RNA sequence: GGGAACGACUCGAGUAGAGUCGAAAACUCAAGCUGUGCUGGGUGAAACAGCACUCAUCUAUAAUACUCAUGUAACAUGAGCCAAUCUGCAGUCGGUUGUUCUGAAUUCUACAUCACUCACAGCGCAGGUUGAUGUGUGAACACUGUAUUUACAGGAAAUUGUCACACUGUUCGCAGUGUGACAAUUAAAAGAAACAACAACAACAAC
Reactivity to 2A3 in 0.01 (KOAc 150mM, MgCl2 10mM, bicine 150mM(pH8.5), 24C), signal-to-noise 1, nucleotides 027 to 156: c000u000c030a050a000g040c020u070g030u010g000c010u050g000g060g060u190g080a050a150a010c050a020g120c040a030c040u040c010a060u000c080u090a080u100a120a140u060a180c030u050c050a040u060g150u170a220a090c010a070u040g000a010g000c040c030a050a180u020c050u090g010c010a070g060u130c060g050g030u010u000g010u110u000c020u050g110a260a150u080u050c030u110a010c000a000u010c030a030c000u090c020a070c040a110g030c030g020c120a060g000g060u020u040g000a080u050g040u000g030u020g000a120a030c070a010c090u000g010u040a150u060u280u300a020c010a000g050g030a000
Reactivity to DMS in 0.01 (KOAc 150mM, MgCl2 10mM, bicine 150mM(pH8.5), 24C), signal-to-noise 1, nucleotides 027 to 156: c170u010c000a100a200g020c020u000g050u000g020c020u010g000g000g030u010g020a180a100a200c050a130g100c040a100c040u010c060a060u010c060u010a050u000a000a070u000a040c010u000c020a010u010g020u010a070a180c140a040u000g000a050g020c020c020a050a050u020c020u010g010c130a120g000u000c050g040g040u000u020g010u000u000c120u010g010a110a120u000u010c070u000a030c030a020u000c020a040c040u010c040a110c030a060g030c080g000c060a150g030g000u000u010g000a010u010g000u030g000u000g030a090a060c030a080c030u030g020u010a130u000u000u000a050c010a040g020g060a070